Record summary: Chemical mapping of a 177-nucleotide RNA with 2A3 and DMS. Values are in units of 0.01, from 0 to 300, in steps of 10. The 2A3 profile rests on 538 reads. Reactivities are given for positions 27 through 126. 2A3 adducts were read by reverse transcription with SuperScript II with manganese.
RNA sequence: GGGAACGACUCGAGUAGAGUCGAAAAUAAUAAACGAUACGGGUCCUCGUUAGUGAAAAUAUCCUUAAGGAAGUAAACGCAUCGGGAGCGAUAGCGGUGAAUUAUUCGUGGUUUUAUCGAUUCGGCACAGACUGUGGGUAUUCGUACCCACAGUCUGAAAAGAAACAACAACAACAAC
Reactivity to 2A3 in 0.01 (KOAc 150mM, MgCl2 10mM, bicine 150mM(pH8.5), 24C), signal-to-noise 1, nucleotides 027 to 126: u170a030a000u040a020a040a090c010g010a000u060a070c010g020g030g070u050c000c000u000c030g000u080u040a010g030u080g100a000a000a000a130u170a110u090c000c010u090u090a120a000g050g050a040a020g030u140a000a240a000c080g030c010a000u000c020g000g000g060a060g090c030g060a030u120a050g030c030g000g060u020g100a000a080u080u140a080u020u110c100g000u000g080g060u000u000u000u050a040u120c010g000a000u060u060c050g000g000c000a000
Reactivity to DMS in 0.01 (KOAc 150mM, MgCl2 10mM, bicine 150mM(pH8.5), 24C), signal-to-noise 2, nucleotides 027 to 126: u030a110a050u080a040a020a070c060g000a070u000a030c020g000g000g020u000c030c050u030c000g000u000u020a030g050u020g000a080a050a110a100u020a210u000c020c010u000u000a060a160g030g000a080a040g010u050a040a090a050c040g000c070a070u000c020g000g000g000a020g020c070g010a080u000a010g010c000g050g000u000g010a140a030u010u010a100u020u000c030g030u010g020g000u000u020u040u000a070u000c070g000a070u020u020c010g040g010c200a250